[RMDB]
RNA sequence: GGGAACGACUCGAGUAGAGUCGAAAAGCGCCAGGAUGUGGCGAUCUCGCCGGAUCCGCGCCCAUGGCAAGGCGGGUGGGUGCUGGCCGUGGUGACGGUCGGGGCCAGCGAUUCCACCGACCGGGCACAUUUAAAUAUAUUUCGAUAUAUUUAAAUGAAAAGAAACAACAACAACAAC
Reactivity to 2A3 in 0.01 (KOAc 150mM, MgCl2 10mM, bicine 150mM(pH8.5), 24C), signal-to-noise 4, nucleotides 027 to 126: g020c010g020c070c050a060g010g030a120u170g030u030g300g010c080g040a170u110c240u110c090g000c010c000g010g040a000u010c000c000g000c020g000c010c010c010a060u090g080g000c020a020a030g020g000c050g040g070g040u060g010g000g010u060g000c010u000g000g000c010c070g300u050g010g060u120g080a140c110g040g020u060c000g010g020g050g000c010c000a010g000c000g010a090u170u030c000c010a010c000c000g010a050c020c000g010g020g040c010a000
Reactivity to DMS in 0.01 (KOAc 150mM, MgCl2 10mM, bicine 150mM(pH8.5), 24C), signal-to-noise 6, nucleotides 027 to 126: g000c040g020c050c130a140g030g010a020u000g010u000g010g010c010g010a130u010c300u010c020g010c010c010g010g000a020u000c010c010g010c040g010c000c010c020a090u010g010g020c040a060a050g000g010c040g020g020g030u000g010g000g010u000g000c000u000g000g000c000c000g000u010g000g000u000g000a110c200g010g000u000c020g010g010g000g020c010c010a010g010c010g010a120u010u010c010c000a050c010c000g000a030c010c010g000g000g010c030a160
Chemical mapping of a 177-nucleotide RNA with 2A3 and DMS. 2A3 adducts were read by reverse transcription with SuperScript II with manganese. For DMS, 12,124 sequencing reads were counted. For 2A3, 4,931 sequencing reads were counted. It was measured as part of the RMDB library OK2TST.